[RMDB]
RNA sequence: GGGAACGACUCGAGUAGAGUCGAAAAGAAAACGGCAGCAACCCGAGCAAGUAGAGCAACGCGAGCAAGAUCAGCAACGCGAGCAACAUGAGCAACAUGAGCAAGAUCAGCAACUACAGCAAAAAAACUAAGUAAAGAUGUUCGCAUCUUUACUUAGAAAAGAAACAACAACAACAAC
Reactivity to DMS in 0.01 (KOAc 150mM, MgCl2 10mM, bicine 150mM(pH8.5), 24C), signal-to-noise 4, nucleotides 027 to 126: g000a090a050a080a060c080g000g010c030a030g010c040a080a100c040c030c040g020a090g020c060a040a080g020u000a070g020a170g000c020a040a080c090g020c060g000a170g020c030a050a040g000a080u000c110a050g010c020a060a060c080g010c060g010a090g010c060a030a060c070a030u000g010a110g000c060a040a050c080a060u000g000a060g010c040a030a050g010a050u000c050a030g010c030a020a060c050u000a020c060a050g000c060a000a000a040a070a040a070a130
Reactivity to 2A3 in 0.01 (KOAc 150mM, MgCl2 10mM, bicine 150mM(pH8.5), 24C), signal-to-noise 3, nucleotides 027 to 126: g050a010a110a010a010c050g010g000c010a000g000c020a020a070c000c040c000g030a010g030c040a080a050g020u080a010g030a020g030c040a050a090c040g000c030g030a020g000c030a070a020g020a160u100c030a000g020c020a050a100c060g000c030g050a010g000c000a010a040c020a050u080g030a030g080c030a010a060c010a080u070g020a000g030c050a050a010g010a090u040c010a020g020c000a030a030c020u100a050c030a030g060c040a010a060a030a020a000a030a130
Description
The record gives the reactivity of an RNA of 177 nucleotides to DMS and 2A3. It was measured as part of the RMDB library M2PK90.